This 207-nucleotide RNA was probed chemically with DMS and 2A3. DMS adducts were read by reverse transcription with MarathonRT. The 2A3 profile rests on 2,039 reads. Reactivities are rounded to 0.1 and cut off at 0 and 3. 2A3 adducts were read by reverse transcription with SuperScript II with manganese. As a SHAPE reagent, 2A3 marks flexible, mostly unpaired nucleotides at the ribose 2'-OH.

[RMDB]
RNA sequence: GGGAACGACUCGAGUAGAGUCGAAAAAUACAAGGGGAGGUUUCGGCCAAAUGUUGUAUGCAGAAAGCGUGAGGAAGGUAGCACUAAGACACUCACGAGUAGCGGUUCGGCAGUAGUGCUAAAAUGAGACAGUACGAAAAGUUCGCUUUUCGUACAAGUCUUAUAGCGUCUUCGGACGCUAUAAGACAAAAGAAACAACAACAACAAC
Reactivity to DMS in 0.01 (KOAc 150mM, MgCl2 10mM, bicine 150mM(pH8.5), 24C), signal-to-noise 2, nucleotides 027 to 156: a130u000a080c050a090a120g020g030g000g010a140g010g010u000u000u000c050g000g000c050c080a050a100a080u020g030u010u000g030u000a140u010g010c030a080g000a060a100a120g020c010g010u000g000a070g000g020a110a050g030g000u000a100g050c020a150c040u000a050a140g020a130c060a080c000u010c020a080c050g000a080g000u000a110g020c030g010g010u000u000c130g020g040c030a090g050u000a080g000u000g000c000u000a050a020a090a100u000g010a170g010a060c050a130g030u010a000c010g010a020a010a030a010g000u000u020c300g000c040u000u000u000u000c000g000u000a010c000a040a110
Reactivity to 2A3 in 0.01 (KOAc 150mM, MgCl2 10mM, bicine 150mM(pH8.5), 24C), signal-to-noise 3, nucleotides 027 to 156: a000u160a010c050a070a050g010g000g000g030a030g030g030u050u000u110c020g030g010c010c040a050a070a070u100g000u050u030g040u050a050u060g000c010a010g070a120a050a000g040c040g000u010g020a020g040g040a090a020g060g000u030a010g030c020a010c040u060a070a000g060a030c030a010c070u030c020a020c050g020a020g060u090a020g020c040g030g050u040u030c020g050g000c030a020g010u070a000g000u000g020c010u060a020a030a000a090u150g000a030g010a050c050a060g010u000a000c000g000a000a000a000a000g010u030u040c090g040c100u000u000u010u000c000g000u000a000c000a000a000